[RMDB]
RNA sequence: GGGAACGACUCGAGUAGAGUCGAAAAGAUAUGGAUGUCAUCCCAUUAGAGCGUUUGACGUAUAUCGGAAACGAUAUACCGAGCUCAUGGGAGUGACAUCCUAAGUCAAAGUGUCGUUCGCGACACAGAAAAAGUUGAAGUUCGCUUCAACUUUUUCAAAAGAAACAACAACAACAAC
Reactivity to 2A3 in 0.01 (KOAc 150mM, MgCl2 10mM, bicine 150mM(pH8.5), 24C), signal-to-noise 5, nucleotides 027 to 126: g050a040u080a040u180g010g000a000u000g010u000c000a020u030c020c000c010a030u130u300a080g010a000g010c060g070u120u290u300g080a050c050g000u020a000u000a000u000c020g030g020a070a080a040c020g000a000u000a000u000a010c000c000g010a020g000c000u000c010a010u020g000g000g010a120g200u080g010a000c000a000u000c000c010u000a020a020g060u020c070a070a090a160g010u000g000u010c010g010u040u080c210g000c020g110a010c010a010c020a040
Reactivity to DMS in 0.01 (KOAc 150mM, MgCl2 10mM, bicine 150mM(pH8.5), 24C), signal-to-noise 7, nucleotides 027 to 126: g000a050u000a300u000g000g000a000u000g010u000c000a100u000c000c010c000a040u000u010a110g020a010g040c000g010u010u010u010g030a200c300g010u000a010u000a000u000c000g010g000a150a110a200c000g000a010u000a000u000a000c000c020g000a080g020c000u000c000a050u000g000g000g000a030g010u000g010a010c010a000u000c000c000u000a020a110g000u010c040a110a150a160g010u000g000u000c000g030u010u000c300g020c010g010a010c000a010c010a110